[RMDB]
RNA sequence: GGGAACGACUCGAGUAGAGUCGAAAAGAUAUGGAUUCUCACUCCCUAUGAAGAGUGGCCAAUCGGUAGUUACAUCGGAAACGAUGUAACUACCGGAGCCACUUGGAGGGAGUGGAAUCCUAAGUCACAGAUAGUUUCUCUUCGGAGAAACUAUCUGAAAAGAAACAACAACAACAAC
Reactivity to DMS in 0.01 (KOAc 150mM, MgCl2 10mM, bicine 150mM(pH8.5), 24C), signal-to-noise 1, nucleotides 027 to 126: g030a020u010a190u000g000g000a020u010u000c000u020c000a010c040u000c000c000c000u000a300u010g010a130a250g000a000g010u000g000g000c000c010a200a110u000c060g000g010u000a000g010u000u000a030c000a000u030c030g010g030a080a070a190c000g000a030u000g010u000a000a000c000u000a020c000c000g000g000a050g030c000c000a000c000u000u000g010g020a020g020g020g020a000g020u000g000g000a000a020u000c000c000u000a020a080g000u010c020a270
Reactivity to 2A3 in 0.01 (KOAc 150mM, MgCl2 10mM, bicine 150mM(pH8.5), 24C), signal-to-noise 2, nucleotides 027 to 126: g040a010u020a010u100g030g010a000u000u020c300u160c080a000c020u080c050c020c010u300a300u270g050a010a020g020a000g040u000g000g020c050c050a050a300u300c090g010g000u000a000g000u020u010a000c030a010u020c020g010g010a040a130a050c000g000a000u020g000u020a000a000c000u000a000c000c000g000g000a000g000c000c000a000c010u010u010g020g020a000g010g010g020a010g000u010g000g000a000a000u050c000c000u020a070a010g000u020c020a010
Chemical mapping of a 177-nucleotide RNA with DMS and 2A3. Values cover nucleotides 27 to 126. It was measured as part of the RMDB library TTRINS.